An RNA of 177 nucleotides, treated with 2A3 and DMS and read out base by base.
RNA sequence: GGGAACGACUCGAGUAGAGUCGAAAAGAUAUGGAACCUAUCUUGACGAAGAACUCUUUCGGAAACGAAAGAGGGAGUUCAAGCUCUAGGUUCCUAAGUCAAACGGCACAGGUUCGCCUGUGCCGAACACACUAUUUUAGUUCGCUAAAAUAGUGUGAAAAGAAACAACAACAACAAC
Reactivity to 2A3 in 0.01 (KOAc 150mM, MgCl2 10mM, bicine 150mM(pH8.5), 24C), signal-to-noise 5, nucleotides 027 to 126: g000a020u060a020u150g020g010a000a020c000c010u050a070u300c010u020u020g030a020c020g080a190a210g040a180a080c000u000c000u020u010u010c000g010g020a060a070a060c010g000a000a000a010g010a010g000g000g000a040g010u110u030c010a010a010g000c010u020c010u020a000g000g010u010u000c000c000u000a000a000g000u000c010a020a040a080c020g000g000c000a000c000a000g000g080u100u120c220g180c050c000u000g000u000g000c010c000g000a000a000
Reactivity to DMS in 0.01 (KOAc 150mM, MgCl2 10mM, bicine 150mM(pH8.5), 24C), signal-to-noise 7, nucleotides 027 to 126: g000a030u010a300u010g010g000a010a000c010c000u000a000u010c000u000u000g000a030c030g010a220a120g010a210a210c000u000c000u000u000u000c000g010g000a130a090a160c000g010a000a000a010g000a020g000g010g000a080g000u010u000c010a010a010g000c000u000c000u000a010g000g010u000u000c000c000u000a010a060g010u000c030a060a080a280c010g000g000c010a010c000a010g000g010u000u020c280g010c010c000u000g000u000g000c000c000g000a010a060

Conditions: 150 mM KOAc, 10 mM MgCl2 and 150 mM bicine (pH 8.5), 24 C. The data come from the RNA Mapping Database (RMDB), library TTRDEL. For DMS the reverse transcriptase was MarathonRT. Values cover nucleotides 27 to 126.